RNA sequence: GGGAACGACUCGAGUAGAGUCGAAAAGAUUUGCUGUGAUGUGUACACCUGCCAUGUACGCAUCAUUCUGUGCAUCUGGCAGGUGAUGCACAGUUGAUCUGCGGAACAUGAUCAGAUCGUCAUUACAGGGUAGGCAUGUGUUCGCAUAUGCCUACCCAAAAGAAACAACAACAACAAC
Reactivity to DMS in 0.01 (KOAc 150mM, MgCl2 10mM, bicine 150mM(pH8.5), 24C), signal-to-noise 6, nucleotides 027 to 126: g000a080u010u010u010g000c030u000g010u000g010a070u020g010u010g050u030a080c010a010c000c000u000g000c020c000a020u020g010u020a040c040g010c080a060u030c210a070u030u030c200u020g050u010g010c010a040u010c070u000g010g000c000a010g000g010u010g000a040u000g000c000a020c010a010g020u040u000g000a020u010c020u010g010c120g000g020a120a100c170a100u020g000a080u020c050a070g000a040u000c060g010u010c080a060u010u030a050c200a160
Reactivity to 2A3 in 0.01 (KOAc 150mM, MgCl2 10mM, bicine 150mM(pH8.5), 24C), signal-to-noise 6, nucleotides 027 to 126: g060a100u110u110u140g060c080u030g020u030g080a140u070g070u010g020u040a010c010a010c000c000u020g010c010c000a020u090g020u050a020c040g000c040a020u040c010a030u110u040c020u060g000u000g000c000a020u010c040u010g040g000c030a020g010g000u020g010a020u010g000c000a000c000a000g000u020u070g000a030u000c000u030g000c020g070g060a120a080c030a140u140g010a100u150c000a010g020a040u050c030g100u080c040a050u030u120a070c070a060